Structure probing data (DMS) for a 177-nucleotide construct.
The reactions ran in a buffer of 150 mM KOAc, 10 mM MgCl2 and 150 mM bicine (pH 8.5), at 24 C.
It was measured as part of the RMDB library OK2TST.
For DMS, 1,270 sequencing reads were counted.
RNA sequence: GGGAACGACUCGAGUAGAGUCGAAAACAUAGGUAUUGGCACUUUGAAUACUGAAAAUGAUUUUAUAUUUUAUAGUGUUAUCGUUGAUGGCGCUGAGCAUCAUGGUGGAGAAAACCCUCUCUGGAUGUAAGAGCAAGAGAUUCGUCUCUUGCUCUUAAAAAGAAACAACAACAACAAC
Reactivity to DMS in 0.01 (KOAc 150mM, MgCl2 10mM, bicine 150mM(pH8.5), 24C), signal-to-noise 2, nucleotides 027 to 126: c070a100u010a150g010g000u000a050u010u020g010g030c050a050c050u010u000u000g020a030a030u000a050c110u000g010a050a020a080a150u010g000a240u010u010u010u020a160u010a040u040u000u000u000a150u010a110g000u000g000u000u010a020u000c040g000u000u010g020a040u000g010g020c070g000c080u010g000a080g000c030a040u000c030a050u000g010g010u000g020g000a050g010a040a030a070a110c090c000c020u010c050u000c020u010g000g000a090u010g000